[RMDB]
RNA sequence: GGGAACGACUCGAGUAGAGUCGAAAAGAUAUGGAGCCGUGUUUCCGAAGAACUAUGUCGGAAACGACAUAGGGAGGAGGGCACCGGCUCCUAAGUCAAACUGAAGUCACGUUCGCGUGACUUCAGACGUAAAAGCUUACUUCGGUAAGCUUUUACGAAAAGAAACAACAACAACAAC
Reactivity to 2A3 in 0.01 (KOAc 150mM, MgCl2 10mM, bicine 150mM(pH8.5), 24C), signal-to-noise 3, nucleotides 027 to 126: g010a000u030a000u090g000g000a000g030c010c030g070u030g020u070u300u150c060c060g160a260a060g010a020a020c010u000a010u010g010u010c000g030g010a030a000a000c000g000a000c000a000u000a000g070g010g010a010g190g170a100g000g040g000c010a000c040c090g000g000c000u000c000c000u000a000a000g000u010c020a060a040a080c010u020g000a000a000g000u000c020a020c030g030u060u160c300g020c010g140u000g000a010c000u000u000c000a010g000a010
Reactivity to DMS in 0.01 (KOAc 150mM, MgCl2 10mM, bicine 150mM(pH8.5), 24C), signal-to-noise 4, nucleotides 027 to 126: g000a050u000a300u000g010g010a010g020c010c000g010u000g000u000u000u010c010c010g010a160a110g000a300a300c010u000a000u010g010u000c010g020g000a080a080a100c010g020a000c000a000u000a010g020g000g000a160g030g000a170g030g000g000c220a020c080c050g000g000c000u000c000c000u000a000a060g000u010c030a080a140a240c020u000g010a030a010g010u000c000a010c010g020u010u020c290g030c020g020u010g000a000c000u000u000c010a010g000a100

The record gives the reactivity of an RNA of 177 nucleotides to 2A3 and DMS.